[RMDB]
RNA sequence: GGGAACGACUCGAGUAGAGUCGAAAAGGCGACUCGCGGUCGAGGGAUUCCUCGAGCUGGAGAAGCGUACCGGGCAGCGGCUGGCUCAUCUGGCCGAGGGCAGCGAGGAACGCCGCAUCACCUACGCCACGAGUCUUGUUUUCGAACAAGACUCGUGAAAAGAAACAACAACAACAAC
Reactivity to 2A3 in 0.01 (KOAc 150mM, MgCl2 10mM, bicine 150mM(pH8.5), 24C), signal-to-noise 1, nucleotides 027 to 126: g010g010c000g030a130c050u010c000g000c040g010g070u120c010g000a090g060g090g010a190u120u110c010c000u000c000g000a080g000c020u020g000g020a030g000a060a000g000c000g010u070a020c000c010g040g160g170c120a200g220c020g000g020c020u090g030g010c000u020c050a180u050c070u030g000g000c000c040g010a040g010g020g000c040a040g010c030g030a050g030g010a210a070c040g020c000c010g020c020a060u040c030a060c000c000u040a040c060g070c100
Reactivity to DMS in 0.01 (KOAc 150mM, MgCl2 10mM, bicine 150mM(pH8.5), 24C), signal-to-noise 2, nucleotides 027 to 126: g030g030c020g000a100c040u000c010g040c040g000g010u000c120g000a120g010g010g000a170u020u000c000c000u020c010g000a120g060c000u000g010g000a010g040a200a110g010c000g020u000a090c010c010g000g010g040c250a180g000c020g000g010c050u050g000g010c000u000c120a230u000c030u000g020g000c000c000g000a020g000g030g010c170a080g010c010g010a030g010g040a040a090c040g000c010c020g000c090a090u000c090a180c040c010u010a080c190g020c120
Background:
The record gives the reactivity of an RNA of 177 nucleotides to 2A3 and DMS. For 2A3, 1,544 sequencing reads were counted. DMS adducts were read by reverse transcription with MarathonRT. High 2A3 reactivity points to a flexible backbone, as in loops and unpaired stretches. The DMS profile rests on 1,120 reads.